[RMDB]
RNA sequence: GGGAACGACUCGAGUAGAGUCGAAAAUAAGUCUAGUUCGCUAGACUUACUAUCGGGAAAACAGCCUCCCGGCUCGAUCAGGCGGAUUCCGUCCAACCGCUGCAACACACGUAUUCGUACGUGUGAACAAUUAAAUCGUGUUCGCACGAUUUAAUUGAAAAGAAACAACAACAACAAC
Reactivity to 2A3 in 0.01 (KOAc 150mM, MgCl2 10mM, bicine 150mM(pH8.5), 24C), signal-to-noise 6, nucleotides 027 to 126: u050a000a000g000u000c000u000a000g020u030u050c190g010c110u000a000g000a010c000u010u000a010c010u030a040u110c020g040g000g000a030a090a020a120c050a050g080c000c020u010c000c010c000g020g000c040u030c040g060a100u110c080a080g040g000c020g000g040a080u230u060c030c020g060u020c030c030a030a040c010c020g020c020u050g060c050a140a060c000a010c000a000c000g000u010a010u030u100c230g030u040a010c000g000u000g000u000g000a000a010
Reactivity to DMS in 0.01 (KOAc 150mM, MgCl2 10mM, bicine 150mM(pH8.5), 24C), signal-to-noise 8, nucleotides 027 to 126: u000a000a000g000u000c000u000a000g010u000u010c210g030c010u000a000g000a010c000u000u000a010c080u000a110u010c030g010g010g000a040a060a110a130c160a070g000c070c060u000c020c020c040g020g000c050u000c040g010a060u000c170a100g000g010c000g010g000a150u000u000c040c040g000u010c030c070a100a080c040c030g010c030u000g020c150a090a200c010a010c000a010c010g020u000a020u000u010c200g000u000a010c000g010u000g000u000g010a080a140